[RMDB]
RNA sequence: GGGAACGACUCGAGUAGAGUCGAAAACCCAGUUCCGGGGCCGUUCACUGGAUCCGAAGCCUCUAGAAGGAUAAUAUAGGCACUCCAUACCCUACUCCGCCUCAAUACGUCCCCGUCGUACAGAAUGCAAGGGCAUCCCUGUUCGCAGGGAUGCCAAGAACCAGAUACUGUUCGCAGUAUCUGGUUCAAAAGAAACAACAACAACAAC
Reactivity to 2A3 in 0.01 (KOAc 150mM, MgCl2 10mM, bicine 150mM(pH8.5), 24C), signal-to-noise 1, nucleotides 027 to 156: c000c000c060a010g000u060u070c000c060g000g000g060g000c070c000g050u110u120c080a030c120u080g100g000a120u030c000c030g030a070a070g070c020c000u110c080u080a130g070a150a060g090g000a070u070a300a050u130a060u100a100g000g000c020a040c030u060c000c000a060u050a230c010c000c000u070a050c020u030c040c030g070c020c030u050c040a040a080u090a070c000g000u010c010c010c000c000g040u030c050g000u020a040c020a020g190a200a170u100g060c020a030a050g060g010g040c000a000u000c020c000c000u010g020u060u070c140g000c140a000g000g010g000a000u000g000c000c000a010a000